[RMDB]
RNA sequence: GGGAACGACUCGAGUAGAGUCGAAAACCCUGUCAUGAGGCCGAAACGAAGGCACGUACCCCUUCGAAUGGCGUCGGGGAGUCAGCGGCUAUAUAUGCGCCGAAUGCUGGCAUCCGGGAACGAGCGUAUUAGACAGUAAUCUUCGGAUUACUGUCAAGUAAUUAUUACGUUUCGACGUAAUAAUUACAAAAGAAACAACAACAACAAC
Reactivity to 2A3 in 0.01 (KOAc 150mM, MgCl2 10mM, bicine 150mM(pH8.5), 24C), signal-to-noise 6, nucleotides 027 to 156: c000c000c030u050g160u090c110a130u170g060a080g090g030c030c030g060a090a080a050c000g010a020a010g020g050c110a020c030g130u170a110c010c000c010c010u000u010c020g050a120a080u180g000g020c030g070u040c010g010g020g020g010a090g010u010c000a000g010c010g040g000c040u010a010u030a040u030a030u300g140c040g000c020c010g070a080a040u230g010c010u000g000g010c010a150u000c000c020g020g030g010a090a040c040g030a020g070c060g010u100a090u120u100a110g000a000c000a000g010u000a000a000u000c000u010u090c220g090g000a000u000u010a000c000u000g000u000c000a000a000
Reactivity to DMS in 0.01 (KOAc 150mM, MgCl2 10mM, bicine 150mM(pH8.5), 24C), signal-to-noise 4, nucleotides 027 to 156: c010c000c020u000g020u000c050a110u000g020a080g040g010c010c020g010a130a100a240c040g020a050a030g010g030c060a120c130g020u010a160c080c070c010c000u000u000c020g020a100a160u010g000g010c040g030u000c010g010g000g000g030a210g010u000c020a040g020c010g020g010c020u000a090u000a060u010a040u000g010c040g010c000c000g020a060a080u000g020c030u010g000g000c000a100u000c030c010g010g020g000a080a110c060g010a130g030c020g020u010a080u000u000a180g010a010c000a030g010u000a010a010u000c000u000u010c300g010g010a000u000u000a010c010u000g010u000c000a010a080

This 207-nucleotide RNA was probed chemically with 2A3 and DMS.
The DMS profile rests on 9,489 reads.
Source: RMDB library M2RFPK, as collected in RNAgym.
For 2A3 the reverse transcriptase was SuperScript II with manganese.